[RMDB]
RNA sequence: GGGAACGACUCGAGUAGAGUCGAAAAACGAGUGAGUUACGACUCACUCGACUUUUAAUGCUACCCAAAGGUCGUGACAAGUCGUUAAAACGCAGAGUCAAAAAGUCCGACGUUACGACGUCGGACAACGAGCGAGUUCUGUUCGCAGAACUCGCAACGAAAAAGGAGUGUUCGCACUCCUUUUUCGAAAAGAAACAACAACAACAAC
Reactivity to 2A3 in 0.01 (KOAc 150mM, MgCl2 10mM, bicine 150mM(pH8.5), 24C), signal-to-noise 1, nucleotides 027 to 156: a000c010g000a000g000u040g000a010g010u050u110a050c190g040a050c080u000c000a000c000u000c000g000a000c000u080u040u030u170a040a040u170g130c100u110a090c040c020c080a010a050a020g040g010u070c070g060u020g000a010c040a090a050g020u090c030g030u080u100a000a070a030a000c060g000c030a010g010a030g090u110c030a100a080a030a030a000g010u010c000c000g000a030c000g000u040u060a020c220g030a010c000g010u000c020g010g010a000c000a000a010c000g020a020g000c010g000a010g000u000u030c010u020g030u030u080c140g020c050a010g000a000a000c020u000c000g010c000a000a000